[RMDB]
RNA sequence: GGGAACGACUCGAGUAGAGUCGAAAAGAUAUGGAGUAUCGAUGAAGCCGUUGAAAUCGGAAACGAUGGAGGCUACAUCGAGUACUCCUAAGUCAAACUCUAGUUACCGUUCGCGGUAACUAGAGAAGAAGAUAUCGUACUUCGGUACGAUAUCUUCAAAAGAAACAACAACAACAAC
Reactivity to DMS in 0.01 (KOAc 150mM, MgCl2 10mM, bicine 150mM(pH8.5), 24C), signal-to-noise 4, nucleotides 027 to 126: g010a020u010a300u000g010g010a010g000u000a040u000c000g000a000u000g020a160a030g020c000c000g010u010u010g000a100a130a000u010c000g010g010a140a130a180c010g000a010u000g010g010a070g010g020c000u010a080c010a020u000c000g000a020g020u000a000c000u000c000c000u000a010a080g000u000c040a120a150a180c000u000c000u000a000g000u000u000a000c000c000g020u000u010c200g030c030g010g010u000a000a000c000u010a000g010a000g010a040a070
Reactivity to 2A3 in 0.01 (KOAc 150mM, MgCl2 10mM, bicine 150mM(pH8.5), 24C), signal-to-noise 3, nucleotides 027 to 126: g030a030u080a040u160g000g000a010g000u000a010u050c010g000a000u010g030a040a010g010c010c030g130u240u060g030a030a030a010u020c020g010g010a130a030a020c010g010a000u010g060g000a010g000g000c000u010a010c000a000u010c000g010a010g010u000a000c000u000c010c010u030a090a020g010u000c050a080a040a170c000u030c010u000a000g000u000u000a000c020c010g030u030u050c300g000c020g130g000u000a000a010c000u000a010g000a010g000a000a010
Chemical mapping of a 177-nucleotide RNA with DMS and 2A3. For DMS, 4,104 sequencing reads were counted. Conditions: 150 mM KOAc, 10 mM MgCl2 and 150 mM bicine (pH 8.5), 24 C. Source: RMDB library TTRDEL, as collected in RNAgym.